[RMDB]
RNA sequence: GGGAACGACUCGAGUAGAGUCGAAAAGAUAUGGAAUGUAUAGCUUUUGACGACUCCUGGUCGGAAACGACCAAGGAGUCGAUAAGCUAGACAUUCCUAAGUCAAACUUCUCACUUCGGUGAGAAGAUCUGAGGUAAAAGUUCGCUUUUACCUCAGAAAAAGAAACAACAACAACAAC
Reactivity to DMS in 0.01 (KOAc 150mM, MgCl2 10mM, bicine 150mM(pH8.5), 24C), signal-to-noise 3, nucleotides 027 to 126: g000a040u000a190u020g000g010a010a000u010g000u000a050u000a010g000c000u000u000u000u010g010a270c180g000a010c010u000c000c000u000g000g000u000c000g020g000a040a020a120c000g020a010c000c010a030a070g030g010a020g010u000c010g010a010u020a020a020g010c000u000a000g000a010c000a010u010u000c000c000u010a010a070g000u000c020a160a160a240c000u000u000c000u000c000a010c000u000u010c210g030g020u000g000a010g000a010a010g010a080
Reactivity to 2A3 in 0.01 (KOAc 150mM, MgCl2 10mM, bicine 150mM(pH8.5), 24C), signal-to-noise 3, nucleotides 027 to 126: g010a020u070a010u090g010g010a020a010u020g000u000a040u010a030g020c030u110u150u230u300g300a220c120g000a000c000u000c000c000u010g000g010u030c010g010g040a050a020a000c010g000a000c010c020a000a060g010g000a000g000u000c000g000a000u000a000a010g020c010u000a010g000a010c000a000u000u000c010c000u000a050a000g000u000c020a050a070a150c010u010u000c010u010c010a000c010u070u080c300g150g000u000g000a010g010a000a010g000a050
Structure probing data (DMS and 2A3) for a 177-nucleotide construct.
The reactions ran in a buffer of 150 mM KOAc, 10 mM MgCl2 and 150 mM bicine (pH 8.5), at 24 C.
Values cover nucleotides 27 to 126.
For 2A3, 6,074 sequencing reads were counted.
Source: RMDB library TTRDES, as collected in RNAgym.
For 2A3 the reverse transcriptase was SuperScript II with manganese.